Structure probing data (DMS and 2A3) for a 170-nucleotide construct.
DMS adducts were read by reverse transcription with MarathonRT.
Reactivities are rounded to 0.1 and cut off at 0 and 3.
For 2A3, 2,464 sequencing reads were counted.
Reactivities are given for positions 27 through 129.
For DMS, 4,015 sequencing reads were counted.

RNA sequence: GGGAACGACUCGAGUAGAGUCGAAAAGACCGCAAGGAGGAAAUUACCAGCAGGGGGUGAUCCACCCGGAGAUGAGCGGACAAGCCACAUCCAGAGGACCCCUUCAGCGAACAGAAGACCCUGGUACAAAGGGCACCGUUCGCGGUGCCCAAAAGAAACAACAACAACAAC
Reactivity to DMS in 0.01 (KOAc 150mM, MgCl2 10mM, bicine 150mM(pH8.5), 24C), signal-to-noise 3, nucleotides 027 to 129: g000a140c090c000g080c090a040a050g020g000a070g080g010a100a020a000u000u000a150c230c150a080g010c170a030g000g000g000g000g000u070g000a070u000c060c100a090c080c110c100g060g000a090g000a050u010g020a300g010c000g010g020a150c110a090a170g020c000c060a000c220a040u080c130c030a140g050a100g000g000a030c130c210c070c000u040u060c000a150g010c050g010a000a000c020a010g010a110a040g010a270c010c000c000u020g000g000u020a090c110a020a050a020
Reactivity to 2A3 in 0.01 (KOAc 150mM, MgCl2 10mM, bicine 150mM(pH8.5), 24C), signal-to-noise 2, nucleotides 027 to 129: g030a020c000c000g030c060a000a010g020g000a010g000g060a040a000a120u100u070a110c090c000a010g020c050a050g010g000g000g000g040u020g010a000u010c030c000a050c010c000c000g080g000a040g000a050u150g020a040g000c030g000g070a010c020a190a000g090c000c000a110c000a050u040c010c000a020g000a100g040g010a050c000c000c020c000u030u050c020a020g000c000g050a020a040c040a020g050a100a010g060a130c040c060c000u000g040g000u010a100c010a080a100a040